Chemical mapping of a 177-nucleotide RNA with DMS and 2A3. DMS adducts were read by reverse transcription with MarathonRT. The DMS profile rests on 18,997 reads. The RNA was probed in 150 mM KOAc, 10 mM MgCl2 and 150 mM bicine (pH 8.5) at 24 C. In probing experiments dimethyl sulfate is read out at A N1 and C N3, which are open when not base-paired. 2A3 adducts were read by reverse transcription with SuperScript II with manganese. It was measured as part of the RMDB library OK1LIB.

RNA sequence: GGGAACGACUCGAGUAGAGUCGAAAAGAAACUAUGUUCUGUCCUGAAGCCUCCACAGGUCCGCGAAAGCGAUCGGAAACGAAUGAGCAUAGUUCAGAGCUGAAGGAGGCACGGCUCAAAAUAAAAACGAGGAUGAAGUGUUCGCACUUCAUCUUCGAAAAGAAACAACAACAACAAC
Reactivity to DMS in 0.01 (KOAc 150mM, MgCl2 10mM, bicine 150mM(pH8.5), 24C), signal-to-noise 7, nucleotides 027 to 126: g000a010a020a020c000u000a010u010g010u000u000c010u010g020u000c000c000u010g000a110a170g010c010c000u000c000c010a300c010a000g000g000u010c050c080g020c010g010a130a100a150g010c010g000a040u010c000g000g000a080a040a080c030g010a010a020u000g000a000g000c010a010u000a000g000u000u000c030a040g020a010g010c000u000g010a130a130g010g000a020g000g010c000a300c030g000g010c010u000c000a140a060a080a070u050a040a070a070a070a160
Reactivity to 2A3 in 0.01 (KOAc 150mM, MgCl2 10mM, bicine 150mM(pH8.5), 24C), signal-to-noise 9, nucleotides 027 to 126: g050a010a020a000c000u000a000u000g010u000u000c030u080g110u020c010c000u010g030a110a010g000c000c000u000c000c000a010c000a010g020g000u000c030c050g010c010g070a120a070a040g050c040g060a120u100c020g020g040a030a050a040c040g020a080a060u070g000a000g000c000a000u000a000g000u000u020c020a020g000a000g000c000u020g020a150a030g030g000a000g000g010c000a000c000g000g000c000u000c000a050a060a020a010u100a020a040a010a000a010